RNA sequence: GGGAACGACUCGAGUAGAGUCGAAAACUGACCUCAGAACUGGCACACCAUCACCUCUAUUGUAUUUUACUGUCAAGGCAAGUCAAUAGGCCAGCCCAGUCUCUGAAUGAGUGGACCAGCAGAGUCAGACUUGCCAUUAGUUCGCUAAUGGCAAGUCAAAAGAAACAACAACAACAAC
Reactivity to DMS in 0.01 (KOAc 150mM, MgCl2 10mM, bicine 150mM(pH8.5), 24C), signal-to-noise 2, nucleotides 027 to 126: c060u000g000a100c070c040u010c050a130g040a080a040c150u010g000g000c150a120c050a060c040c040a110u000c090a130c070c040u020c030u000a020u010u000g020u000a020u000u000u000u000a040c040u000g010u010c150a070a150g000g040c140a020a040g000u010c040a030a040u010a060g010g010c090c030a080g040c060c000c010a070g030u000c060u000c060u000g000a070a060u010g000a100g070u010g000g000a100c060c060a080g000c100a070g030a100g010u010c080a070
Reactivity to 2A3 in 0.01 (KOAc 150mM, MgCl2 10mM, bicine 150mM(pH8.5), 24C), signal-to-noise 1, nucleotides 027 to 126: c010u010g030a020c010c050u060c020a010g010a050a040c010u020g030g000c020a020c000a010c170c020a080u110c030a030c040c050u030c040u040a030u080u130g070u040a080u020u080u010u040a090c040u050g170u190c050a060a040g010g000c000a030a000g000u000c000a010a020u000a020g080g030c020c010a000g020c020c000c000a030g020u000c040u030c010u100g110a140a090u100g020a020g050u050g010g010a010c000c010a000g020c030a010g050a040g090u020c060a010
Chemical mapping of a 177-nucleotide RNA with DMS and 2A3. Reactivities are rounded to 0.1 and cut off at 0 and 3. For 2A3, 965 sequencing reads were counted. For DMS the reverse transcriptase was MarathonRT. Conditions: 150 mM KOAc, 10 mM MgCl2 and 150 mM bicine (pH 8.5), 24 C.